[RMDB]
RNA sequence: GGGAACGACUCGAGUAGAGUCGAAAAGCGGGGCUUGAAACGCGGGUAGCGCGCACGCCCGGCGAAGAAGUUCGCAUACGCGGUGUCCUGGUGCCGAAGUGUCUGCUGCAACGGCACGCUCGACACCUAGAACAUACCGUAUUCGUACGGUAUGUAACAUAAGGCUCAACUUCGGUUGAGCCUUAUGAAAAGAAACAACAACAACAAC
Reactivity to 2A3 in 0.01 (KOAc 150mM, MgCl2 10mM, bicine 150mM(pH8.5), 24C), signal-to-noise 2, nucleotides 027 to 156: g060c050g010g020g020g000c030u010u070g090a060a150a020c060g000c040g020g130g040u230a110g110c030g000c000g010c020a020c020g000c010c010c000g000g000c010g000a020a000g090a060a000g090u080u080c030g010c110a070u040a170c070g000c040g030g000u010g000u000c000c010u010g000g000u010g000c000c000g040a090a030g040u040g060u200c200u260g110c060u090g010c010a070a000c000g000g000c000a000c020g100c000u000c000g000a000c010a000c000c000u020a020g020a030a000c000a000u000a000c000c000g010u010a000u030u080c270g010u050a000c000g010g000u000a000u000g020u000a020a000
Reactivity to DMS in 0.01 (KOAc 150mM, MgCl2 10mM, bicine 150mM(pH8.5), 24C), signal-to-noise 2, nucleotides 027 to 156: g040c030g010g050g080g020c010u020u020g010a150a110a050c030g020c010g020g010g050u000a140g000c020g020c020g050c060a150c150g000c000c000c000g020g070c010g000a040a300g000a120a210g010u000u010c020g020c040a110u010a130c070g020c120g020g020u010g000u000c030c040u000g000g000u010g020c000c020g000a060a270g020u000g010u000c140u000g050c120u010g020c070a100a300c090g000g000c010a000c010g010c040u000c040g000a050c020a010c000c000u000a030g010a070a040c000a010u000a000c000c000g040u000a040u000u000c270g030u010a000c000g000g020u000a000u000g050u000a030a150
Structure probing data (2A3 and DMS) for a 207-nucleotide construct. Values cover nucleotides 27 to 156. As a SHAPE reagent, 2A3 marks flexible, mostly unpaired nucleotides at the ribose 2'-OH. The RNA was probed in 150 mM KOAc, 10 mM MgCl2 and 150 mM bicine (pH 8.5) at 24 C.